An RNA of 207 nucleotides, treated with 2A3 and DMS and read out base by base. The data come from the RNA Mapping Database (RMDB), library RNAMAK. The reactions ran in a buffer of 150 mM KOAc, 10 mM MgCl2 and 150 mM bicine (pH 8.5), at 24 C.

RNA sequence: GGGAACGACUCGAGUAGAGUCGAAAAGCGUACUACGGUCGGGUAGCCGAAGAACAAGCGAACUACGUGGUUCCCAAAUAGGAACCACGCGCUUGGGAGGCUACCACGACCGUAUCGCAAAGAGUCGCUUUAAUACUUCGGUAUUAAAGCGACUCAAGGAGACAAAUAGAUUCGUCUAUUUGUCUCCAAAAGAAACAACAACAACAAC
Reactivity to 2A3 in 0.01 (KOAc 150mM, MgCl2 10mM, bicine 150mM(pH8.5), 24C), signal-to-noise 3, nucleotides 027 to 156: g030c020g040u120a090c020u020a010c040g000g010u020c010g030g010g000u010a000g000c000c040g180a280a010g040a000a050c000a000a010g020c000g040a110a070c170u070a040c290g000u030g010g000u020u030c000c000c000a170a140a090u220a090g000g000a000a000c000c010a000c000g010c000g000c000u000u000g010g000g020a020g000g000c300u300a000c000c300a000c000g000a000c300c000g010u020a000u020c010g010c010a000a040a000g000a000g000u000c000g000c000u000u000u000a000a000u000a000c010u020u070c270g060g000u000a000u000u000a000a000a000g000c000g000a000c000u000c000a000a000
Reactivity to DMS in 0.01 (KOAc 150mM, MgCl2 10mM, bicine 150mM(pH8.5), 24C), signal-to-noise 1, nucleotides 027 to 156: g030c020g000u010a030c040u000a020c000g020g000u000c000g000g010g010u000a030g030c000c000g000a150a170g020a200a140c010a020a020g000c010g000a120a300c030u010a100c000g060u000g020g000u000u000c000c000c000a070a120a210u000a080g010g010a020a020c000c000a030c000g000c020g070c010u020u030g010g010g020a280g000g000c000u000a020c010c000a010c000g010a000c000c010g000u000a000u000c000g050c020a100a060a120g000a030g040u000c010g000c000u000u000u000a000a020u030a000c000u000u000c300g070g000u000a000u010u000a010a000a000g000c000g010a000c000u010c000a010a070